Chemical mapping of a 170-nucleotide RNA with 2A3 and DMS. Reactivities are given for positions 27 through 129. For 2A3 the reverse transcriptase was SuperScript II with manganese. The RNA was probed in 150 mM KOAc, 10 mM MgCl2 and 150 mM bicine (pH 8.5) at 24 C. The 2A3 profile rests on 46,418 reads.

[RMDB]
RNA sequence: GGGAACGACUCGAGUAGAGUCGAAAAAUUCCGAGGAUGUUUCCCAGCCAGGGAUUUUCAUCCUCGAGUUUCUUGAUGGUUCUCCUGCUCUUCCGGAGCCUUCUUUCGAGGUCUUCCGCGUCUUUUCAUAACUAGGAGUUCGCUCCUAGUAAAAGAAACAACAACAACAAC
Reactivity to 2A3 in 0.01 (KOAc 150mM, MgCl2 10mM, bicine 150mM(pH8.5), 24C), signal-to-noise 9, nucleotides 027 to 129: a020u120u030c080c010g000a010g000g000a000u000g010u010u010u010c000c000c000a020g200c140c120a100g030g010g010a010u130u050u030u110c000a010u000c000c000u000c000g010a020g000u010u030u000c040u040u100g060a100u150g050g020u080u020c020u010c010c020u050g050c020u020c000u180u030c050c040g020g000a010g000c000c000u060u040c000u040u120u060c040g020a030g050g070u020c010u030u010c020c010g050c010g090u030c040u050u070u020u060c080a100u070a190
Reactivity to DMS in 0.01 (KOAc 150mM, MgCl2 10mM, bicine 150mM(pH8.5), 24C), signal-to-noise 9, nucleotides 027 to 129: a120u000u000c100c030g000a000g000g030a020u000g020u010u020u010c010c010c000a220g080c240c280a150g010g000g000a030u050u050u030u050c000a000u000c020c000u020c000g020a040g000u000u000u000c020u000u000g020a070u020g000g010u030u020c040u000c020c020u030g020c060u000c050u040u030c080c060g030g000a080g000c040c030u030u020c020u030u010u020c060g010a030g000g010u010c060u030u010c020c020g040c100g000u000c070u030u020u000u030c080a120u010a190